[RMDB]
RNA sequence: GGGAACGACUCGAGUAGAGUCGAAAAGCUAUUGUUGGAAUCACCGUACCUAUUUAGGUUUACGCUCCAAGAUCGGUGGAUAGCAGCCGUAUCAAUAUCUAGGAGAACUGUGCUAUGUUUAGAAGAUUAAAUCGACGCAUCUUCGGAUGCGUCGAAAGCUAUGCAUGACGUUCGCGUCAUGCAUAGCAAAAGAAACAACAACAACAAC
Reactivity to DMS in 0.01 (KOAc 150mM, MgCl2 10mM, bicine 150mM(pH8.5), 24C), signal-to-noise 1, nucleotides 027 to 156: g000c020u010a020u010u000g000u000u010g000g020a160a100u000c010a030c070c000g030u000a060c010c000u000a240u020u020u000a050g030g000u000u000u020a050c080g030c010u020c020c020a090a160g030a060u030c000g020g020u010g010g020a130u000a090g010c100a290g010c020c010g010u020a060u000c020a030a170u010a080u000c090u000a160g020g020a150g020a020a130c050u000g050u000g000c030u000a050u000g010u000u000u010a100g010a070a160g000a260u000u000a100a110a100u000c010g010a020c000g000c010a000u000c000u000u000c290g040g000a030u000g000c010g030u000c000g020a000a010a020
Reactivity to 2A3 in 0.01 (KOAc 150mM, MgCl2 10mM, bicine 150mM(pH8.5), 24C), signal-to-noise 2, nucleotides 027 to 156: g080c080u080a020u070u220g080u000u070g050g030a060a100u110c020a020c020c040g040u040a030c000c000u090a160u270u220u260a040g000g010u050u070u050a030c020g000c000u030c000c020a060a070g010a100u010c010g020g000u060g040g080a080u100a050g000c040a000g010c000c040g040u120a080u090c010a050a030u090a040u110c050u070a100g000g020a030g030a070a100c020u040g040u030g030c000u030a010u110g040u030u130u050a150g020a140a020g010a040u130u200a060a030a140u010c000g000a000c000g040c000a000u030c000u000u040c110g050g000a010u000g000c000g000u000c000g000a000a010a000

Structure probing data (DMS and 2A3) for a 207-nucleotide construct. The 2A3 profile rests on 782 reads. For 2A3 the reverse transcriptase was SuperScript II with manganese.